[RMDB]
RNA sequence: GGGAACGACUCGAGUAGAGUCGAAAAGCUGGUAACGGAAUCCGAAGUGCAUGCCGAGGUGUCAUGUCCUCGUAAAACCUGUGACAACCAAGCUAGUUGCGAACGACUCCAACUACGCCCUCGCCGCCUAAAUCCCGGUGAGCGUCCAUCCUUUCAGGUUGGUUUAAUAGUUCGCUAUUAAACCAACAAAAGAAACAACAACAACAAC
Reactivity to 2A3 in 0.01 (KOAc 150mM, MgCl2 10mM, bicine 150mM(pH8.5), 24C), signal-to-noise 5, nucleotides 027 to 156: g020c030u050g020g050u060a070a040c050g030g040a060a040u020c060c040g020a110a020g030u020g020c040a020u070g040c030c010g040a040g040g020u060g020u070c020a020u020g210u210c020c000u000c000g030u060a010a010a010a030c010c010u030g010u030g040a010c020a020a040c070c050a090a010g030c020u030a010g000u020u030g060c090g100a100a040c070g080a110c060u010c020c000a020a020c010u050a040c050g000c010c000c000u030c020g000c010c000g020c010c000u080a110a090a060u080c010c010c010g020g020u030g010a030g000c020g040u000c020c020a110u060c010c010u060u120u100c050a050g000
Reactivity to DMS in 0.01 (KOAc 150mM, MgCl2 10mM, bicine 150mM(pH8.5), 24C), signal-to-noise 1, nucleotides 027 to 156: g040c010u010g040g010u020a090a170c060g000g020a120a100u000c040c000g030a080a100g050u000g000c030a120u000g010c050c030g020a120g030g130u000g020u000c030a060u010g000u000c040c010u000c010g010u000a050a040a150a140c040c020u010g000u000g000a080c000a120a130c090c010a060a180g040c050u000a080g040u010u020g020c000g010a060a160c180g010a110c040u000c020c000a080a090c020u010a050c080g010c010c060c000u000c050g010c070c040g000c020c000u030a070a060a150u020c040c020c020g020g020u010g010a050g000c050g000u000c060c060a120u010c040c030u000u000u010c030a090g000